RNA sequence: GGGAACGACUCGAGUAGAGUCGAAAAUCGGUCAAGAACUUCAUUGAGUUGAUCCCACUUGACAUCGACCUCGAAACGACACGGCAACUUGUUUUAAAGGGAAAAAAUAUCACGGCAAUUCCGCCAAACUGCGGUUCUUCUUCGGAAGAACCGCAGUAAAAGAAACAACAACAACAAC
Reactivity to 2A3 in 0.01 (KOAc 150mM, MgCl2 10mM, bicine 150mM(pH8.5), 24C), signal-to-noise 1, nucleotides 027 to 126: u030c000g000g030u030c000a050a050g110a070a020c050u120u050c000a180u070u200g150a000g180u020u120g110a230u120c060c000c060a000c000u020u000g080a050c000a140u090c000g060a060c000c010u050c090g120a110a080a000c110g000a000c000a000c300g150g000c000a080a000c050u020u000g200u110u000u050u150a190a000a080g000g030g000a030a030a030a030a030a030u200a050u230c090a050c060g110g120c000a000a000u050u040c000c000g060c090c000a000a000